[RMDB]
Structure probing data (2A3 and DMS) for a 177-nucleotide construct. The DMS profile rests on 14,748 reads. For 2A3, 25,526 sequencing reads were counted. The RNA was probed in 150 mM KOAc, 10 mM MgCl2 and 150 mM bicine (pH 8.5) at 24 C.
RNA sequence: GGGAACGACUCGAGUAGAGUCGAAAAUGAACGUGCGUACAUCUCUCUCAGACUGUACGACAGUCUGACUCUCUCCCACUCUAGUUCCACGAGAGAGAGAGAGCGUUGGAACUAGGGUGAAAUGAAACAAUCUAUAGAGAUUCGUCUCUAUAGAUUGAAAAGAAACAACAACAACAAC
Reactivity to 2A3 in 0.01 (KOAc 150mM, MgCl2 10mM, bicine 150mM(pH8.5), 24C), signal-to-noise 8, nucleotides 027 to 126: u140g020a090a020c070g070u130g070c030g010u100a020c040a090u010c020u010c000u000c010u000c060a020g030a110c060u020g020u110a090c080g090a060c050a000g030u000c010u030g020a070c010u000c000u000c020u020c060c020c000a010c000u010c000u000a000g000u000u000c000c010a010c020g030a060g010a010g000a000g000a020g010a010g020a130g010c020g060u120u100g000g000a000a000c000u000a000g010g010g000u010g050a120a140a080u190g040a070a060a030
Reactivity to DMS in 0.01 (KOAc 150mM, MgCl2 10mM, bicine 150mM(pH8.5), 24C), signal-to-noise 8, nucleotides 027 to 126: u010g000a070a080c090g000u010g020c050g010u000a050c040a080u000c020u000c030u000c060u000c040a120g010a060c130u000g010u000a070c130g010a120c040a050g010u000c010u000g000a110c070u000c040u000c040u000c050c070c010a050c020u000c000u000a010g000u000u000c000c000a040c050g000a070g010a100g000a070g010a050g000a050g010a060g000c040g010u000u000g010g000a020a020c020u000a020g000g010g020u000g000a020a040a070u000g000a130a100a150